An RNA of 207 nucleotides, treated with DMS and 2A3 and read out base by base.
[RMDB]
RNA sequence: GGGAACGACUCGAGUAGAGUCGAAAAUGAAUCAGGAGUCAGCAAACCAAGAUCCUUGUCCCACAAGGUCCUAGUCCCAAUUCUGUCACUGGGUUUCAUAACCUCACCCUCAAUUUAUCUAUCCAUAUACAGGGCAUGAGAGUACCCACAUCUCUCACCUAUCAUUUAGUUUCGACUAAAUGAUAGGAAAAGAAACAACAACAACAAC
Reactivity to DMS in 0.01 (KOAc 150mM, MgCl2 10mM, bicine 150mM(pH8.5), 24C), signal-to-noise 3, nucleotides 027 to 156: u010g020a110a100u000c040a080g020g010a160g030u000c030a060g000c070a090a100a110c040c030a090a080g010a070u000c020c030u010u000g020u010c040c060c050a190c040a010a070g020g010u000c000c010u010a110g010u010c020c020c020a070a160u000u000c060u010g010u010c040a120c070u000g000g020g010u000u000u000c050a100u010a070a120c040c010u000c030a040c010c000c010u000c030a060a120u000u010u000a080u020c050u000a170u010c060c060a040u010a100u000a110c080a040g040g020g010c050a100u000g000a060g020a090g030u010a170c010c020c010a060c130a110u000c000u000c000u000c020a270
Reactivity to 2A3 in 0.01 (KOAc 150mM, MgCl2 10mM, bicine 150mM(pH8.5), 24C), signal-to-noise 7, nucleotides 027 to 156: u090g020a010a030u070c030a040g050g040a050g070u030c030a020g010c070a070a080a080c060c030a050a040g030a060u120c020c010u020u020g060u060c020c010c000a030c010a010a010g020g010u050c010c030u070a040g070u050c000c020c000a050a090u130u070c040u080g070u050c020a020c080u040g040g020g050u010u110u090c080a080u070a080a070c000c020u010c020a030c000c000c000u020c010a060a080u020u090u030a040u040c070u050a090u050c030c030a030u060a010u020a130c090a040g030g000g000c050a050u080g000a010g000a010g010u060a070c000c040c010a040c020a110u050c030u000c000u010c020a030
Conditions: 150 mM KOAc, 10 mM MgCl2 and 150 mM bicine (pH 8.5), 24 C. The 2A3 profile rests on 7,704 reads.